[RMDB]
RNA sequence: GGGAACGACUCGAGUAGAGUCGAAAAAUGAAAGAGUUGUAGGGGAAAAUUUGUUGGAGUACUCGACUUUUCGAAUACCAGUUAGAGGUUCAACACUCACCCUUGUCAAAUCGGGGAAUGAGAUAUUAGCUUCCUAUCCAAGUGAGGGGUCUACGGCGGUAAUCAAGUGAUUCGUCACUUGAUUACCAAAAGAAACAACAACAACAAC
Reactivity to 2A3 in 0.01 (KOAc 150mM, MgCl2 10mM, bicine 150mM(pH8.5), 24C), signal-to-noise 2, nucleotides 027 to 156: a000u130g000a050a050a050g030a010g030u060u180g020u050a020g020g000g010g020a030a110a050a170u110u110u150g010u020u050g030g050a040g050u030a050c040u010c030g020a040c010u180u170u090u120c030g070a070a030u050a200c000c090a010g030u030u020a010g000a030g050g000u030u050c030a030a030c000a030c090u010c020a060c000c000c000u000u060g070u050c090a090a080a080u130c040g010g000g040g010a030a180u120g010a040g000a060u080a090u100u090a040g020c040u050u040c040c000u050a110u050c040c030a080a020g010u030g030a030g020g000g020g000u000c020u080a040c010g160g050c080
Reactivity to DMS in 0.01 (KOAc 150mM, MgCl2 10mM, bicine 150mM(pH8.5), 24C), signal-to-noise 1, nucleotides 027 to 156: a170u000g020a150a110a100g010a130g030u000u000g010u000a030g000g010g040g000a050a100a090a130u000u000u010g010u000u000g020g020a130g000u000a050c020u000c020g060a070c150u020u010u000u000c000g030a090a060u010a020c040c010a100g020u010u010a060g020a080g000g000u000u030c010a040a050c020a040c040u000c010a060c020c000c000u000u010g000u000c070a080a070a090u010c070g040g000g030g030a040a090u000g000a040g000a080u000a070u000u000a130g000c040u000u000c040c030u000a070u000c000c050a090a090g040u030g010a090g000g000g000g000u010c020u000a030c040g040g040c100
The data come from the RNA Mapping Database (RMDB), library OK3TST. An RNA of 207 nucleotides, treated with 2A3 and DMS and read out base by base. 2A3 is a SHAPE reagent: it acylates the 2'-hydroxyl of flexible nucleotides of all four kinds. For 2A3 the reverse transcriptase was SuperScript II with manganese. Reactivities are rounded to 0.1 and cut off at 0 and 3. The RNA was probed in 150 mM KOAc, 10 mM MgCl2 and 150 mM bicine (pH 8.5) at 24 C. DMS adducts were read by reverse transcription with MarathonRT.